An RNA of 177 nucleotides, treated with 2A3 and DMS and read out base by base. Values cover nucleotides 27 to 126. The reactions ran in a buffer of 150 mM KOAc, 10 mM MgCl2 and 150 mM bicine (pH 8.5), at 24 C. 2A3 adducts were read by reverse transcription with SuperScript II with manganese. The 2A3 profile rests on 688 reads.
RNA sequence: GGGAACGACUCGAGUAGAGUCGAAAAGAGUAACCAACAAUGUGAUCUUGCUUGCGGAGGCAAGACUUGCACAGUAUUAAAUCUGCAAGUAGUGCUAUUGUUGGAAAGAAUACUGUGAAGUCAACAAAAUCCGUGAGGACUUCGGUCCUCACGGAUUAAAAGAAACAACAACAACAAC
Reactivity to 2A3 in 0.01 (KOAc 150mM, MgCl2 10mM, bicine 150mM(pH8.5), 24C), signal-to-noise 1, nucleotides 027 to 126: g150a010g000u040a140a040c040c000a020a000c030a000a020u250g190u040g300a300u210c000u020u000g000c000u000u000g020c050g020g050a000g000g000c020a050a000g000a090c000u000u190g010c000a040c000a080g000u000a000u000u080a060a110a060u050c000u000g000c000a000a000g000u000a000g180u000g000c020u000a020u000u000g000u000u000g000g000a000a000a000g000a070a000u060a010c080u070g000u010g000a100a070g000u000c000a050a060c000a020a290
Reactivity to DMS in 0.01 (KOAc 150mM, MgCl2 10mM, bicine 150mM(pH8.5), 24C), signal-to-noise 1, nucleotides 027 to 126: g000a030g000u000a040a090c000c000a000a000c000a000a000u000g000u040g000a300u060c060u000u000g020c040u000u000g020c030g000g050a040g000g010c250a150a100g000a010c010u000u000g050c100a060c190a010g070u000a070u000u000a040a300a080u070c000u030g000c000a000a000g060u000a000g000u000g000c000u000a000u000u000g000u000u000g000g000a000a130a000g000a150a060u000a010c030u000g010u000g000a110a000g000u030c020a230a050c300a070a080